[RMDB]
RNA sequence: GGGAACGACUCGAGUAGAGUCGAAAACGACUGUAAUGGUCAAGGUGGGUUUGAAGGCACUUGAUUUUCUCAAUGUCUCUAUUCCAUGUCCAAAUCUGGAAGCCCAGCGGCGCCCAGCACGAACCUUGCGGUGGUCACCCACUCGCACGGGUAGCCUACAAGUAGAUAGGUUCGCCUAUCUACUUGUAAAAGAAACAACAACAACAAC
Reactivity to DMS in 0.01 (KOAc 150mM, MgCl2 10mM, bicine 150mM(pH8.5), 24C), signal-to-noise 2, nucleotides 027 to 156: c050g000a100c030u000g000u000a150a100u010g030g000u000c010a130a110g020g030u000g000g000g040u000u000u010g010a090a010g010g000c010a020c050u000u020g010a140u010u000u000u000c110u000c020a030a040u000g000u000c000u000c010u000a160u000u000c030c000a070u000g030u010c110c080a070a130a120u000c070u010g000g010a100a100g000c020c000c000a150g000c150g030g040c030g000c010c000c010a150g020c100a080c080g000a040a070c000c040u000u000g020c010g040g040u000g010g010u000c120a140c160c000c010a050c030u000c050g010c040a030c130g020g000g010u000a070g010c050c040u000
Reactivity to 2A3 in 0.01 (KOAc 150mM, MgCl2 10mM, bicine 150mM(pH8.5), 24C), signal-to-noise 7, nucleotides 027 to 156: c020g030a010c010u040g040u170a090a150u180g010g010u040c050a030a030g040g050u040g020g030g020u050u100u160g150a110a030g010g000c020a050c160u020u000g010a050u140u080u230u110c100u010c000a010a020u020g010u000c000u000c000u040a140u070u020c010c010a030u120g060u040c080c060a070a100a080u060c050u020g000g020a040a010g020c000c000c020a040g140c010g050g000c020g010c010c000c010a010g000c020a010c060g050a050a030c000c000u010u000g000c000g000g010u010g010g040u250c040a120c030c020c010a010c010u220c020g000c000a020c040g000g020g020u030a040g000c000c000u000